[RMDB]
RNA sequence: GGGAACGACUCGAGUAGAGUCGAAAAUACCUUCCAAUGCCAUCACAUCAUGGGUAGGGCUUCAACAUGUAAAUUCUAAAGGGACACAUACAUUCAACCCAUAAUAGACGCCAGUCCAGAACUUAGCUUUCUCUUGCUGACUUGAGGCCUGUAGAGAUGAGGUUUUAAUAUUCGUAUUAAAACCUCAAAAAGAAACAACAACAACAAC
Reactivity to 2A3 in 0.01 (KOAc 150mM, MgCl2 10mM, bicine 150mM(pH8.5), 24C), signal-to-noise 4, nucleotides 027 to 156: u070a030c020c000u050u050c040c010a080a080u070g030c040c010a060u050c040a080c010a110u120c030a100u120g070g000g000u070a060g010g030g000c010u040u020c020a050a050c020a050u080g050u160a080a110a110u120u070c070u180a100a060a070g030g010g040a030c040a010c010a110u160a060c040a040u060u140c030a090a060c000c010c010a040u150a130a040u060a080g070a030c050g010c030c010a010g040u070c050c030a020g040a070a050c030u090u060a050g040c020u030u100u000c010u000c010u060u060g020c010u030g070a130c030u030u040g020a010g010g050c000c020u060g020u100a070g010a010g000a050
Reactivity to DMS in 0.01 (KOAc 150mM, MgCl2 10mM, bicine 150mM(pH8.5), 24C), signal-to-noise 3, nucleotides 027 to 156: u000a100c020c000u020u010c000c030a080a060u000g020c000c030a130u010c090a090c070a070u000c030a070u010g000g010g030u000a110g030g020g030c030u000u000c030a080a080c030a100u000g010u010a060a060a140u000u020c030u000a030a070a150g010g040g000a120c040a060c100a100u000a090c060a070u000u000c030a080a160c030c010c030a120u010a050a160u000a090g000a050c030g020c040c010a130g010u000c090c040a100g020a040a100c050u000u010a090g020c050u010u010u000c000u000c020u010u000g020c010u010g050a040c050u000u000g010a080g010g010c020c010u000g000u010a090g000a120g010a250